[RMDB]
RNA sequence: GGGAACGACUCGAGUAGAGUCGAAAAUGCCAUGAAGAUAACAAUAUAUUGCUAAGAGUAAUUUCAUAAGAGAAUGCCCAAACCAUGCAUUACUGGAUGGCUUUUUGUCAUUAUUUUUUUUGAAGGCCCAAUGGUGAUAGUUCGCUAUCACCAUUGGAAAAGAAACAACAACAACAAC
Reactivity to DMS in 0.01 (KOAc 150mM, MgCl2 10mM, bicine 150mM(pH8.5), 24C), signal-to-noise 3, nucleotides 027 to 126: u010g000c040c010a070u030g020a110a080g000a100u000a050a090c100a060a070u040a100u010a030u000u010g010c000u010a070a130g000a070g000u010a030a020u020u010u020c030a070u000a130a070g000a130g020a070a050u020g000c000c090c060a040a100a110c160c070a040u000g000c170a040u010u020a050c130u000g000g000a080u000g000g000c060u020u010u030u000u000g010u000c050a030u000u010a000u010u000u020u000u000u000u010u000g020a050a050g010g020c090
Reactivity to 2A3 in 0.01 (KOAc 150mM, MgCl2 10mM, bicine 150mM(pH8.5), 24C), signal-to-noise 5, nucleotides 027 to 126: u150g010c020c000a040u100g060a050a040g080a110u140a090a010c020a140a020u080a020u030a050u120u100g010c010u040a060a020g030a010g100u020a050a120u050u110u130c050a040u070a150a020g040a010g030a090a030u060g030c010c030c030a030a040a030c030c020a050u100g010c010a030u040u080a100c060u080g070g010a020u020g040g000c000u060u020u010u040u040g020u000c020a000u000u030a060u050u030u000u010u000u000u020u070g130a080a010g030g000c000